The record gives the reactivity of an RNA of 177 nucleotides to DMS and 2A3. For DMS, 2,098 sequencing reads were counted. DMS adducts were read by reverse transcription with MarathonRT. Source: RMDB library OK2TRN, as collected in RNAgym.

RNA sequence: GGGAACGACUCGAGUAGAGUCGAAAAGACGAGCCAAUUUAUUUAGAUUUGUUAUCCAAUGUAGACAACGCAUUGAAGUGUCCGUGGUAUGAACUAGGUAUGCUGUUUGAAAAAAUAAGCAUUGCCCACGUGUCAGCUAAUUCGUUAGCUGACACGUAAAAGAAACAACAACAACAAC
Reactivity to DMS in 0.01 (KOAc 150mM, MgCl2 10mM, bicine 150mM(pH8.5), 24C), signal-to-noise 2, nucleotides 027 to 126: g000a070c070g000a040g020c050c020a090a070u000u000u010a050u030u010u000a100g010a100u000u000u000g000u000u000a100u000c030c010a080a010u010g030u010a100g000a050c120a060a100c130g000c040a080u010u000g010a070a140g020u010g000u000c010c060g040u010g000g010u000a050u000g000a050a100c100u010a070g000g030u000a020u000g010c020u010g020u000u000u000g010a010a020a090a010a020a020u010a050a020g020c010a040u000u000g030c040c010c100
Reactivity to 2A3 in 0.01 (KOAc 150mM, MgCl2 10mM, bicine 150mM(pH8.5), 24C), signal-to-noise 2, nucleotides 027 to 126: g030a050c070g030a020g020c010c030a050a050u000u220u190a160u000u180u110a140g010a090u020u010u110g040u000u100a020u060c040c000a080a100u050g030u100a080g020a130c050a100a010c070g000c010a030u040u160g040a150a000g040u000g010u000c040c010g040u020g000g020u060a070u230g040a030a030c030u030a090g030g010u030a020u040g000c000u020g080u000u040u010g060a070a060a020a010a000a010u120a110a010g010c000a000u010u130g000c000c010c000

Reactivities are given for positions 27 through 126.